The record gives the reactivity of an RNA of 177 nucleotides to DMS and 2A3.
As a SHAPE reagent, 2A3 marks flexible, mostly unpaired nucleotides at the ribose 2'-OH.
Source: RMDB library OK2TRN, as collected in RNAgym.
For DMS the reverse transcriptase was MarathonRT.
The RNA was probed in 150 mM KOAc, 10 mM MgCl2 and 150 mM bicine (pH 8.5) at 24 C.
For 2A3 the reverse transcriptase was SuperScript II with manganese.
The DMS profile rests on 4,929 reads.
The 2A3 profile rests on 2,205 reads.

[RMDB]
RNA sequence: GGGAACGACUCGAGUAGAGUCGAAAAUGAAUUCUGACUCCCUUAUCAGGAAACACAAAAAAGACUUGAGCCUAACAGCCCAUUAACAUUCCUCAUUGGCUGAUGAUGGUGGAGGUGUGACAGUGACUCGUUGGGUAAUAUUCGUAUUACCCAACGAAAAAGAAACAACAACAACAAC
Reactivity to DMS in 0.01 (KOAc 150mM, MgCl2 10mM, bicine 150mM(pH8.5), 24C), signal-to-noise 6, nucleotides 027 to 126: u010g000a070a200u000u000c030u000g010a090c110u000c040c020c050u000u020a230u000c020a070g010g000a050a080a160c100a070c140a020a030a090a100a080a110g000a120c070u000u000g010a120g010c010c020u000a110a090c100a080g000c030c010c060a080u000u010a080a080c140a130u000u000c030c020u000c090a070u000u000g010g010c100u000g010a080u000g000a060u000g000g020u000g000g010a080g010g020u010g010u000g010a080c120a070g000u000g010a100c160
Reactivity to 2A3 in 0.01 (KOAc 150mM, MgCl2 10mM, bicine 150mM(pH8.5), 24C), signal-to-noise 2, nucleotides 027 to 126: u030g020a000a100u120u000c010u080g020a030c030u070c000c000c020u030u060a070u020c020a000g000g130a080a110a010c080a020c080a020a180a000a020a040a050g060a020c000u060u060g020a020g000c020c000u020a040a030c000a000g000c000c030c020a030u090u070a050a060c050a130u040u170c030c010u110c030a080u040u030g050g000c030u030g060a210u090g000a020u100g040g040u050g030g020a040g000g000u090g020u000g030a020c040a050g020u020g080a060c000